Overview
An RNA of 177 nucleotides, treated with 2A3 and DMS and read out base by base. The 2A3 profile rests on 8,017 reads. For DMS, 16,298 sequencing reads were counted. For DMS the reverse transcriptase was MarathonRT. It was measured as part of the RMDB library OK1LIB.

RNA sequence: GGGAACGACUCGAGUAGAGUCGAAAAAGUCGAGUGCUUGUCUUGUAAUGUAGAGCCGGAGGGACAGGCAGAGUAUGUGAUGGGAACAGGAAAUUAACCGGCAUGAGAGGACACUCGUGAAUUUGGAGUAAAUUACCUCAUUCGUGAGGUAAUUUACAAAAGAAACAACAACAACAAC
Reactivity to 2A3 in 0.01 (KOAc 150mM, MgCl2 10mM, bicine 150mM(pH8.5), 24C), signal-to-noise 9, nucleotides 027 to 126: a000g190u120c050g030a040g060u060g000c040u070u040g060u040c010u070u100g100u150a140a170u220g080u160a070g020a020g100c000c010g010g010a040g020g030g000a020c030a020g010g030c020a010g040a010g060u200a110u190g080u040g050a150u110g040g020g020a040a070c040a050g060g120a010a110a080u160u070a120a120c010c000g020g000c010a030u070g030a020g000a000g010g060a010c010a010c040u010c010g020u030g040a060a110u110u100u040g050g010a080
Reactivity to DMS in 0.01 (KOAc 150mM, MgCl2 10mM, bicine 150mM(pH8.5), 24C), signal-to-noise 6, nucleotides 027 to 126: a100g010u010c020g000a100g010u010g010c030u010u000g010u010c000u010u010g010u020a110a070u030g020u020a070g010a140g000c020c010g000g000a260g020g020g000a060c040a040g000g010c020a030g010a090g020u040a040u010g010u010g020a090u010g000g010g020a090a080c100a090g010g010a050a040a080u020u020a080a110c030c030g000g000c010a090u020g000a030g000a110g010g000a090c200a020c010u000c020g020u010g020a040a120u020u010u000g000g010a300